[RMDB]
RNA sequence: GGGAACGACUCGAGUAGAGUCGAAAACGGAUCGCUCGGCGCCGUUGAGCCGACGGUCGCUGCUGAUCGGCAACGCUGUCGUGGCCUUUGCGGUGAUCGGUUUCGCCUCGCUGGCGGUGGCGGUGGCAACUACUCAGCUGUUCGCAGCUGAGUAGUUAAAAGAAACAACAACAACAAC
Reactivity to 2A3 in 0.01 (KOAc 150mM, MgCl2 10mM, bicine 150mM(pH8.5), 24C), signal-to-noise 4, nucleotides 027 to 126: c020g040g020a040u040c010g010c090u120c100g100g040c020g020c010c020g060u050u190g020a010g030c020c010g020a030c010g000g000u030c020g000c040u040g000c020u070g050a170u150c080g000g000c000a030a030c040g050c190u300g180u300c050g030u040g090g000c000c000u090u130u090g000c010g000g040u040g010a040u040c000g040g030u040u110u090c020g010c010c010u000c010g000c030u060g020g000c010g020g300u020g010g000c000g000g020u030g060g030c020
Reactivity to DMS in 0.01 (KOAc 150mM, MgCl2 10mM, bicine 150mM(pH8.5), 24C), signal-to-noise 3, nucleotides 027 to 126: c050g000g010a020u010c020g000c050u010c100g030g000c010g000c020c030g010u010u000g000a080g020c210c020g010a040c000g000g000u000c020g010c040u010g000c010u010g010a080u010c170g010g000c010a020a010c070g020c290u010g010u010c010g010u010g000g020c030c020u020u010u000g000c020g000g000u000g000a020u000c020g010g010u010u000u000c000g010c300c000u010c040g000c060u010g020g000c010g000g000u000g000g020c000g010g010u010g000g010c030

Structure probing data (2A3 and DMS) for a 177-nucleotide construct. For DMS, 6,352 sequencing reads were counted. Reactivities are given for positions 27 through 126. The reactions ran in a buffer of 150 mM KOAc, 10 mM MgCl2 and 150 mM bicine (pH 8.5), at 24 C. High DMS reactivity at an A or C suggests that its Watson-Crick edge is free.